[RMDB]
RNA sequence: GGGAACGACUCGAGUAGAGUCGAAAAUCAGGAGCUGGCGGUGCGCUUCAACUGCGCGAUGCAGGACCUGCAGCUGCUGGGGCUCAUCAAGGAAGCCGGCCGCCGGCGCAGGGAGAGCUGCGUGCAGCGCUUACAAAUGCUUCGGCAUUUGUAAGCGAAAAGAAACAACAACAACAAC
Reactivity to DMS in 0.01 (KOAc 150mM, MgCl2 10mM, bicine 150mM(pH8.5), 24C), signal-to-noise 5, nucleotides 027 to 126: u000c050a100g010g010a250g010c010u000g010g000c010g000g020u000g010c160g000c010u000u000c040a130a170c140u000g010c080g020c210g010a070u000g010c150a030g000g000a160c060c030u000g000c040a200g020c110u000g010c030u010g010g010g000g000c010u000c030a070u000c110a120a190g000g000a050a020g020c020c050g020g000c000c010g010c020c020g000g020c000g010c060a050g010g000g010a140g010a090g010c030u000g010c060g000u010g000c060a100g000
Reactivity to 2A3 in 0.01 (KOAc 150mM, MgCl2 10mM, bicine 150mM(pH8.5), 24C), signal-to-noise 2, nucleotides 027 to 126: u100c000a020g140g000a050g020c000u020g030g010c020g020g040u120g040c050g010c020u030u040c040a110a080c050u130g040c070g020c040g050a040u110g020c050a000g030g090a070c000c000u000g010c020a050g100c040u210g000c030u080g030g000g060g030c030u020c060a060u050c040a090a060g160g000a040a010g010c020c000g050g000c000c000g000c000c020g030g000c010g000c010a000g000g040g030a090g000a000g010c030u030g000c010g050u070g010c030a040g040

This 177-nucleotide RNA was probed chemically with DMS and 2A3. The data come from the RNA Mapping Database (RMDB), library OK2TRN. For 2A3, 5,499 sequencing reads were counted. The RNA was probed in 150 mM KOAc, 10 mM MgCl2 and 150 mM bicine (pH 8.5) at 24 C. For DMS, 6,191 sequencing reads were counted.